[RMDB]
RNA sequence: GGGAACGACUCGAGUAGAGUCGAAAAUUAAAGAAGCAAAUCUCCAAACGCCAACGAUGAGCGUUUCGCAAUCGCCGCUUAAGGCUUUUGCCGAGGCUGCUUGAGCCUUGUUACCAAAGAAAAGCCGAAAACCCAAAUGUCUUCGGACAUUUGGGAAGUCUACGAUCAUGUUCGCAUGAUCGUAGACAAAAGAAACAACAACAACAAC
Reactivity to 2A3 in 0.01 (KOAc 150mM, MgCl2 10mM, bicine 150mM(pH8.5), 24C), signal-to-noise 1, nucleotides 027 to 156: u190u070a110a020a000g060a090a000g010c000a030a090a120u050c090u030c070c000a050a010a010c040g000c020c010a160a070c090g130a150u160g010a030g010c010g000u030u040u090c050g000c000a010a010u010c060g000c020c000g150c090u190u200a060a070g000g000c010u000u010u010u020g010c040c000g020a010g010g000c030u060g000c010u100u030g010a000g030c000c000u010u010g060u090u140a040c020c000a060a000a000g000a020a010a020a000g030c020c040g110a040a040a060a070c000c000c000a000a000a000u000g000u000c020u030u000c090g080g000a000c000a000u000u000u010g020g000g000a000a000